This 177-nucleotide RNA was probed chemically with 2A3 and DMS. Source: RMDB library RFMREP, as collected in RNAgym.
RNA sequence: GGGAACGACUCGAGUAGAGUCGAAAAGCUUGCGUUUGUCUGUUAUAUCUUGGUGGACGAGUAGUCGCGGUUGGGACUGAGGUGCCUACAACGUGUUUUUGAGUGGGCCUGUGUCUCUGUGUGCGCCCAACACUAGGCAGUUCGCUGCCUAGUGUUGAAAAGAAACAACAACAACAAC
Reactivity to 2A3 in 0.01 (KOAc 150mM, MgCl2 10mM, bicine 150mM(pH8.5), 24C), signal-to-noise 1, nucleotides 027 to 126: g010c010u000u070g100c070g100u030u130u060g020u000c060u080g100u130u040a160u040a070u170c130u100u100g040g030u050g010g010a010c000g010a010g030u120a040g000u040c010g020c050g020g050u110u030g010g010g010a010c030u080g110a060g100g010u100g080c000c000u000a000c000a130a060c050g110u090g180u140u050u010u080u180g100a140g010u020g000g030g000c000c010u080g000u020g070u000c000u000c030u020g110u050g050u050g000c000g060c000c010
Reactivity to DMS in 0.01 (KOAc 150mM, MgCl2 10mM, bicine 150mM(pH8.5), 24C), signal-to-noise 2, nucleotides 027 to 126: g020c020u010u000g010c060g020u000u000u000g010u000c050u000g020u010u010a120u010a100u000c070u000u010g020g020u000g000g010a040c040g000a110g010u000a070g020u000c020g030c060g010g000u010u000g010g000g000a040c020u010g000a110g000g000u000g010c020c000u000a030c050a080a140c190g000u010g000u000u000u000u000u000g000a260g010u010g000g010g000c010c040u000g010u000g010u000c010u000c020u010g010u010g010u000g000c080g000c030c060
For 2A3, 734 sequencing reads were counted.